An RNA of 207 nucleotides, treated with DMS and 2A3 and read out base by base.
[RMDB]
RNA sequence: GGGAACGACUCGAGUAGAGUCGAAAAUGAGUGUAGAUGCUGUUAUUUUGAACCACAGAUUAAGAUUCUCGAUAGAGAUGAGAUGCUCAAUGGAUCAUCGUGUGAUAUGAACAGACAUUGUAUUAUGAUGAAUUUACCCGAUGUAGGCGAAUUUGGAUAUUCGAAAAGUAUUCGUACUUUUCGAAUAAAAAGAAACAACAACAACAAC
Reactivity to DMS in 0.01 (KOAc 150mM, MgCl2 10mM, bicine 150mM(pH8.5), 24C), signal-to-noise 5, nucleotides 027 to 156: u000g010a110g020u000g020u000a070g010a110u000g020c010u000g000u000u000a080u000u000u010u010g010a070a130c040c050a120c040a090g010a140u000u000a100a090g000a200u000u000c010u000c020g000a230u010a130g020a100g010a060u000g000a120g010a060u010g010c020u000c030a080a110u010g010g000a120u000c010a060u010c030g020u010g020u020g020a120u000a070u000g010a050a100c050a120g010a090c080a080u000u000g020u000a080u000u000a080u010g000a160u000g020a040a050u000u000u000a040c010c000c030g020a120u010g020u000a070g010g020c030g010a030a060u000u000u000g030g010a300
Reactivity to 2A3 in 0.01 (KOAc 150mM, MgCl2 10mM, bicine 150mM(pH8.5), 24C), signal-to-noise 4, nucleotides 027 to 156: u070g020a040g010u040g020u100a030g020a060u020g020c020u030g030u030u040a160u050u130u080u080g060a050a040c020c000a010c060a030g030a030u100u100a120a030g030a070u100u020c050u000c050g110a120u130a240g020a000g000a000u040g030a020g030a080u210g010c010u000c020a070a090u090g030g010a030u030c010a010u010c050g030u040g020u020g080a050u050a030u170g050a040a020c030a040g190a030c010a040u030u070g070u110a060u100u050a070u160g040a010u030g040a070a140u030u050u090a030c000c000c020g040a020u070g030u060a030g010g080c020g090a040a050u130u060u070g040g050a020
It was measured as part of the RMDB library OK3TST. For 2A3 the reverse transcriptase was SuperScript II with manganese. DMS adducts were read by reverse transcription with MarathonRT. High DMS reactivity at an A or C suggests that its Watson-Crick edge is free.